An RNA of 177 nucleotides, treated with 2A3 and read out base by base. 2A3 adducts were read by reverse transcription with SuperScript II with manganese.
RNA sequence: GGGAACGACUCGAGUAGAGUCGAAAACGACGUGUGCUACAGAGACAGUGAACACCAUGGAUCUCUGUAUUUCCAGCCCAGUACAUGGUUGGGCAGUCAUUUGGUGUCAUGUCCAGCCUGCACUCAAGAGGUGAGGUGGGUUCGCCCACCUCACCUCAAAAGAAACAACAACAACAAC
Reactivity to 2A3 in 0.01 (KOAc 150mM, MgCl2 10mM, bicine 150mM(pH8.5), 24C), signal-to-noise 1, nucleotides 027 to 126: c060g050a020c090g040u090g030u040g020c000u000a000c010a100g080a040g010a040c000a190g010u080g070a160a220c050a010c160c000a000u090g060g300a240u040c000u000c000u060g010u030a070u000u020u000c050c000a000g000c000c100c000a020g010u070a030c070a040u300g020g000u000u000g000g010g000c000a000g000u000c040a130u090u090u090g300g000u110g000u040c120a210u000g000u000c030c030a090g010c020c100u080g000c010a000c000u000c080a070a030